The record gives the reactivity of an RNA of 177 nucleotides to 2A3.
Source: RMDB library OK1LIB, as collected in RNAgym.
For 2A3 the reverse transcriptase was SuperScript II with manganese.
Values cover nucleotides 27 to 126.

RNA sequence: GGGAACGACUCGAGUAGAGUCGAAAAGGCGAUCGAGGCGCUGACCCCGGUCCGGCGAAUGUGACUCCGGGUGCGGAUGACCAUGCACAGCAUGCGUCGCCGACGGUGCUAUGUCCCCAGGGUCACGGCUGGCGCUAAGCUUCGGCUUAGCGCCAGCAAAAGAAACAACAACAACAAC
Reactivity to 2A3 in 0.01 (KOAc 150mM, MgCl2 10mM, bicine 150mM(pH8.5), 24C), signal-to-noise 1, nucleotides 027 to 126: g050g050c070g000a050u090c060g000a090g230g000c000g020c130u180g020a260c000c030c030c020g120g050u050c130c080g050g060c000g050a150a150u240g000u070g060a000c020u020c000c000g000g000g080u210g070c000g000g020a050u090g000a030c010c000a030u000g000c050a090c050a180g000c000a000u060g070c170g070u000c070g000c000c000g040a000c030g000g000u140g050c000u050a090u250g000u020c030c000c000c010a020g000g020g000u000c000a000c000g000